[RMDB]
RNA sequence: GGGAACGACUCGAGUAGAGUCGAAAAGAUAUGGAGGUCAAGACUCCGAUAAGCGUAGCCUCGGAAACGAGGUCACGCUUUUGACGGAGUACUGACCUCCUAAGUCAAAGGGCGGUUCGCCGCCCAAGCCAACUAAAUUCUUCGGAAUUUAGUUGGCAAAAGAAACAACAACAACAAC
Reactivity to DMS in 0.01 (KOAc 150mM, MgCl2 10mM, bicine 150mM(pH8.5), 24C), signal-to-noise 2, nucleotides 027 to 126: g000a080u010a300u000g000g010a000g020g030u000c010a000a110g020a040c000u010c000c000g030a120u000a030a000g000c000g070u010a090g000c000c000u010c000g010g000a130a140a300c010g010a000g020g000u000c070a010c010g010c000u030u010u000u010g020a280c170g000g000a000g010u010a010c030u000g020a000c010c010u000c000c000u010a010a070g000u010c030a090a070a200g020g000g030c000g020g020u000u060c290g050c020c000g040c010c000c000a000a040
Reactivity to 2A3 in 0.01 (KOAc 150mM, MgCl2 10mM, bicine 150mM(pH8.5), 24C), signal-to-noise 1, nucleotides 027 to 126: g020a010u070a020u200g010g010a020g000g020u020c030a020a060g010a040c000u010c000c030g020a090u050a030a000g000c010g000u020a030g000c000c020u030c030g000g040a110a080a060c010g000a000g000g010u020c010a000c000g000c000u060u020u000u010g030a030c010g000g000a030g010u030a130c000u000g020a010c010c010u030c000c000u010a000a000g000u000c020a000a130a060g010g000g020c020g030g010u100u110c280g080c060c000g030c000c000c000a000a000
An RNA of 177 nucleotides, treated with DMS and 2A3 and read out base by base. The reactions ran in a buffer of 150 mM KOAc, 10 mM MgCl2 and 150 mM bicine (pH 8.5), at 24 C. The 2A3 profile rests on 4,004 reads.